Structure probing data (2A3 and DMS) for a 177-nucleotide construct.
For DMS, 17,534 sequencing reads were counted.
Conditions: 150 mM KOAc, 10 mM MgCl2 and 150 mM bicine (pH 8.5), 24 C.
For DMS the reverse transcriptase was MarathonRT.
The data come from the RNA Mapping Database (RMDB), library TTRDES.

RNA sequence: GGGAACGACUCGAGUAGAGUCGAAAAGAUAUGGAUGCCCAAGGGAGCUCCGUAUCGGAAACGAUACGCGAGCAUCGAUCUUGAGGCAUCCUAAGUCAAAAGCUUACCGGGUUCGCCCGGUAAGCAAGUAUAUAUACACGUUCGCGUGUAUAUAUACAAAAGAAACAACAACAACAAC
Reactivity to 2A3 in 0.01 (KOAc 150mM, MgCl2 10mM, bicine 150mM(pH8.5), 24C), signal-to-noise 1, nucleotides 027 to 126: g000a000u010a010u040g000g000a000u000g010c000c000c030a010a000g050g020g030a090g010c010u020c010c000g010u000a000u000c000g010g000a010a010a000c000g000a000u010a000c020g050c180g040a000g010c000a000u080c020g010a040u000c010u010u090g030a270g030g000c000a000u000c000c000u000a000a000g000u000c000a050a070a110a080g000c010u000u000a000c000c000g030g040g000u050u070c270g100c020c000c000g000g000u000a010a000g000c000a000a000
Reactivity to DMS in 0.01 (KOAc 150mM, MgCl2 10mM, bicine 150mM(pH8.5), 24C), signal-to-noise 7, nucleotides 027 to 126: g000a010u000a030u010g000g000a010u000g010c000c010c000a010a030g000g010g010a060g030c000u000c010c010g010u000a000u000c000g010g000a010a010a030c000g010a020u000a010c000g010c300g010a010g010c000a160u010c260g000a050u010c000u000u000g000a200g000g010c000a010u000c000c000u000a000a050g000u010c010a140a100a110a170g010c000u000u000a000c000c000g010g000g010u000u010c300g010c000c000c000g000g000u000a000a000g010c010a010a020